[RMDB]
RNA sequence: GGGAACGACUCGAGUAGAGUCGAAAAUUAUUUAUGUAGUCUCGCUUUUGGACAAAACUAACCCACAGAUCUUUUAUUAUCCUUGUGCUUGUGGCAUUAUCCCCUGUCCAAUGCACACGAGAAACGUGUUAUGAGGUCUGUUCGCAGACCUCAUAACAAAAGAAACAACAACAACAAC
Reactivity to 2A3 in 0.01 (KOAc 150mM, MgCl2 10mM, bicine 150mM(pH8.5), 24C), signal-to-noise 2, nucleotides 027 to 126: u070u030a090u040u140u050a100u130g090u040a060g040u040c030u030c070g050c030u070u030u130u050g030g000a030c010a020a070a020a080c020u040a010a040c000c030c070a070c020a010g080a100u040c020u040u120u090u060a040u110u100a040u130c000c000u040u030g020u030g020c020u010u030g030u150g040g000c000a010u060u030a080u120c000c000c000c000u000g000u000c000c030a020a000u100g000c060a000c000a000c000g050a060g050a140a050a000c020g050u030